This 177-nucleotide RNA was probed chemically with DMS and 2A3. The DMS profile rests on 5,896 reads. The RNA was probed in 150 mM KOAc, 10 mM MgCl2 and 150 mM bicine (pH 8.5) at 24 C. Reactivities are given for positions 27 through 126. For DMS the reverse transcriptase was MarathonRT.

[RMDB]
RNA sequence: GGGAACGACUCGAGUAGAGUCGAAAAGAUAUGGAAUGUGACUGACAUGUAAGGGUCGGAAACGACCUGAUGCAACAGCAGUACAUUCCUAAGUCAAAAGCCCUCUGCUGUUCGCAGCAGAGGGCAAGUUACUUGUAUGGUUCGCCAUACAAGUAACAAAAGAAACAACAACAACAAC
Reactivity to DMS in 0.01 (KOAc 150mM, MgCl2 10mM, bicine 150mM(pH8.5), 24C), signal-to-noise 5, nucleotides 027 to 126: g010a020u000a230u000g010g000a030a010u000g010u010g010a030c000u010g010a130c120a080u010g020u000a160a300g000g000g020u000c000g010g000a040a050a090c010g010a010c000c000u000g000a040u000g000c020a070a100c220a100g010c000a000g000u000a020c000a010u000u000c000c000u010a030a080g010u010c020a090a090a090a180g000c000c010c000u000c000u000g020c000u000g010u000u010c190g020c020a010g010c000a010g000a010g020g000g010c010a000a000
Reactivity to 2A3 in 0.01 (KOAc 150mM, MgCl2 10mM, bicine 150mM(pH8.5), 24C), signal-to-noise 4, nucleotides 027 to 126: g000a000u030a020u080g020g010a010a000u010g030u100g220a160c000u010g010a110c060a300u060g010u020a030a050g010g000g000u010c010g010g000a000a010a020c010g000a000c000c030u010g010a040u280g000c020a120a210c060a300g010c000a000g010u010a000c000a000u000u010c000c010u000a020a000g010u010c020a000a070a090a170g010c000c020c010u000c000u010g020c000u010g090u090u200c300g020c160a000g000c010a000g000a000g040g000g000c000a000a010
Overview: 2A3 adducts were read by reverse transcription with SuperScript II with manganese.